RNA sequence: GGGAACGACUCGAGUAGAGUCGAAAAGCAGUAUGAUGAGGAAGGCCUUCCUCAUCGCGUAAUUUCGGGAAAUUACGCACAUUGUUGGGAAACAAUGUGUGAUUGAAGGCCUUCAAUCACGCAUAAUUGCCCGCAAUUAUGCAUACUGAGUGUGUAACGUAGCAAGCUUGUUCGCAAGCUUGCUACGAAAAGAAACAACAACAACAAC
Reactivity to 2A3 in 0.01 (KOAc 150mM, MgCl2 10mM, bicine 150mM(pH8.5), 24C), signal-to-noise 1, nucleotides 027 to 156: g030c030a000g030u160a050u210g070a040u060g050a020g040g070a040a000g020g030c000c000u020u020c000c030u040c040a020u090c000g030c020g000u020a030a080u030u050u220c080g050g020g100a000a000a010u070u050a010c000g040c000a000c010a010u030u000g000u010u160g040g000g030a130a000a020c060a080a050u020g060u030g000u040g040a030u020u040g010a000a010g040g020c060c000u010u040c000a000a010u000c000a000c030g070c000a000u060a010a060u080u100g040c000c000c000g080c000a000a000u010u020a000u030g020c000a050u010a040c040u070g050a020g150u150g020u100g030u180a080a070
Description:
The record gives the reactivity of an RNA of 207 nucleotides to 2A3. For 2A3 the reverse transcriptase was SuperScript II with manganese. It was measured as part of the RMDB library OK3TST.